Chemical mapping of a 177-nucleotide RNA with 2A3 and DMS. Values cover nucleotides 27 to 126. It was measured as part of the RMDB library OK2TST. The DMS profile rests on 1,643 reads. The reactions ran in a buffer of 150 mM KOAc, 10 mM MgCl2 and 150 mM bicine (pH 8.5), at 24 C.
RNA sequence: GGGAACGACUCGAGUAGAGUCGAAAAAUCAGCCUGAAUGCUUUCAUAUUCCAGCCACACCACGGUGUUAGUAAACGCGUAGAUCUCGAGCGGUAAACCGUUAUCACCUGGAGCCAGUUGGCGUACCCUCACCGUUCUUGUUCGCAAGAACGGUGAGAAAAGAAACAACAACAACAAC
Reactivity to 2A3 in 0.01 (KOAc 150mM, MgCl2 10mM, bicine 150mM(pH8.5), 24C), signal-to-noise 2, nucleotides 027 to 126: a010u080c040a030g070c010c020u130g060a090a060u130g000c050u000u070u060c060a060u040a170u210u000c010c000a030g020c030c000a020c010a010c010c000a000c080g020g000u040g010u040u050a050g000u060a000a150a040c050g000c040g050u040a050g040a230u050c050u010c100g050a030g020c000g000g000u040a120a030a000c020c010g010u020u000a170u130c010a050c040c000u060g000g000a010g020c050c010a040g010u060u070g040g000c030g020u030a060c000c000
Reactivity to DMS in 0.01 (KOAc 150mM, MgCl2 10mM, bicine 150mM(pH8.5), 24C), signal-to-noise 2, nucleotides 027 to 126: a080u000c100a140g020c040c030u000g000a090a070u000g020c030u000u010u000c100a110u000a120u000u000c010c050a150g000c020c030a090c120a100c000c000a040c120g000g000u000g000u000u000a120g010u000a070a080a080c030g000c090g030u000a140g010a080u000c150u020c080g000a100g000c060g000g020u000a050a100a040c070c040g000u000u000a090u000c010a020c050c020u010g000g010a090g000c100c140a070g030u020u000g010g000c030g000u000a020c130c020